[RMDB]
RNA sequence: GGGAACGACUCGAGUAGAGUCGAAAAAUGGUAGUUAGUCUACUCGCUAUCCUAGUUACUUUGGAGUACUCUAAAGUGUGUGUAAACGGGCGAAAGUCUGUAAAAUACUGGGGACAUAGGGUCAACAAGAACUAGUAGACCUUCGGGUCUACUAGAACUCUCGUAAGAAGUUCGCUUCUUACGAGAGAAAAGAAACAACAACAACAAC
Reactivity to 2A3 in 0.01 (KOAc 150mM, MgCl2 10mM, bicine 150mM(pH8.5), 24C), signal-to-noise 2, nucleotides 027 to 156: a010u070g000g000u010a040g000u130u030a030g070u090c040u030a060c010u040c030g030c020u050a060u110c020c010u040a050g070u040u080a050c010u040u010u020g030g000a050g050u150a120c110u000c000u040a040a020a020g020u040g010u020g010u010g020u070a060a120a040c030g000g010g010c010g060a060a020a000g020u010c000u000g020u050a030a040a060a000u070a070c020u020g000g020g010g000a000c010a100u120a020g070g000g010u030c030a010a040c030a120a050g030a060a040c010u000a010g000u000a000g000a000c000c000u010u030c090g050g000g010u000c000u000a000c000u000a000g000a000a000
Reactivity to DMS in 0.01 (KOAc 150mM, MgCl2 10mM, bicine 150mM(pH8.5), 24C), signal-to-noise 1, nucleotides 027 to 156: a130u000g010g030u010a070g020u000u000a080g010u010c010u000a020c010u010c040g010c080u010a090u000c030c040u010a100g020u010u000a050c010u000u010u000g050g000a100g030u010a080c110u000c020u020a040a030a040g000u000g000u000g050u000g020u000a050a180a010c000g000g010g020c010g000a230a060a170g020u000c010u010g000u010a010a100a070a110u010a030c080u000g010g020g010g000a080c020a070u000a070g020g010g000u010c050a070a070c080a050a120g010a100a200c010u000a010g020u000a010g010a030c000c010u020u010c300g050g030g010u000c000u000a000c000u010a020g020a050a100